[RMDB]
RNA sequence: GGGAACGACUCGAGUAGAGUCGAAAACACAGGAUUUCGAUCCUGUGAAAAAAGCGUACUACAAGCAGUUCAACGGGAGCAACUUCCCAAAUAGGAAGUUGCGAAGAACGUUAGACUUCCCUUGUAUCGCAAAAAGCCCUGCAUUCGUGCAGGGCAAUAGAACAAUAAGAUUCGUCUUAUUGUUCUAAAAAGAAACAACAACAACAAC
Reactivity to DMS in 0.01 (KOAc 150mM, MgCl2 10mM, bicine 150mM(pH8.5), 24C), signal-to-noise 3, nucleotides 027 to 156: c000a020c000a000g020g010a040u000u000u000c300g020a050u000c000c000u000g030u000g000a000a060a050a070a090a120g000c010g000u000a090c090u000a010c000a040a040g020c060a050g000u010u000c020a040a040c030g000g000g010a300g020c010a010a020c030u000u000c000c000c010a030a150a130u010a030g000g000a050a000g020u000u010g020c010g010a030a140g010a090a060c020g020u000u000a030g020a030c010u000u000c090c080c020u000u000g010u000a040u000c040g000c020a050a060a080a130a140g000c000c000c000u010g010c030a120u000u000c300g010u010g010c000a010g000g020g030c000a010a000
Reactivity to 2A3 in 0.01 (KOAc 150mM, MgCl2 10mM, bicine 150mM(pH8.5), 24C), signal-to-noise 4, nucleotides 027 to 156: c000a000c000a000g020g020a020u080u120u240c180g050a010u070c020c000u010g010u010g000a070a000a000a000a000a000g050c050g030u080a090c030u010a010c020a040a010g080c130a010g200u090u160c010a010a000c000g010g000g010a040g000c000a000a000c000u010u000c000c010c050a110a210a040u160a010g000g000a000a020g010u010u000g000c010g010a020a000g010a000a000c010g000u010u020a050g000a010c000u040u030c020c000c000u000u000g040u030a070u300c040g000c060a000a000a000a150a020g010c010c000c010u010g000c000a020u030u090c210g090u030g000c000a000g010g000g000c000a000a000